[RMDB]
RNA sequence: GGGAACGACUCGAGUAGAGUCGAAAAGAUUUACGGCGGGAAAUGUCCCGGGUGCGCGCGGACGUCCCGGGUGCGGCACCGACCGAAAGGCGCAGAAACGGCACCGACCGAAACCGCCGGAAAGAAACAUUUAGGACCUAUUCGUAGGUCCUAAAUGAAAAGAAACAACAACAACAAC
Reactivity to 2A3 in 0.01 (KOAc 150mM, MgCl2 10mM, bicine 150mM(pH8.5), 24C), signal-to-noise 1, nucleotides 027 to 126: g030a020u030u080u190a030c010g000g000c000g020g000g060a030a080a120u190g050u050c000c000c000g000g010g010u180g030c050g000c000g000c160g090g030a180c010g040u020c010c000c000g010g010g000u050g010c030g030g010c020a030c070c010g040a080c000c020g020a040a060a010g010g020c050g000c020a030g120a130a130a020c020g010g000c000a070c120c030g070a090c020c000g000a060a020a030c010c010g000c000c010g000g010a020a030a000g000a000a070a000
Reactivity to DMS in 0.01 (KOAc 150mM, MgCl2 10mM, bicine 150mM(pH8.5), 24C), signal-to-noise 3, nucleotides 027 to 126: g010a190u000u000u000a070c020g010g000c000g010g010g000a100a090a140u000g000u000c030c010c010g010g000g020u000g020c020g020c050g020c170g000g000a180c030g010u000c020c010c010g010g000g020u010g020c000g000g010c060a100c040c040g000a180c020c030g020a040a080a110g010g010c040g010c040a100g010a060a070a250c030g020g000c020a080c080c060g000a170c040c040g000a020a080a150c030c000g010c000c000g000g000a020a020a060g000a160a100a180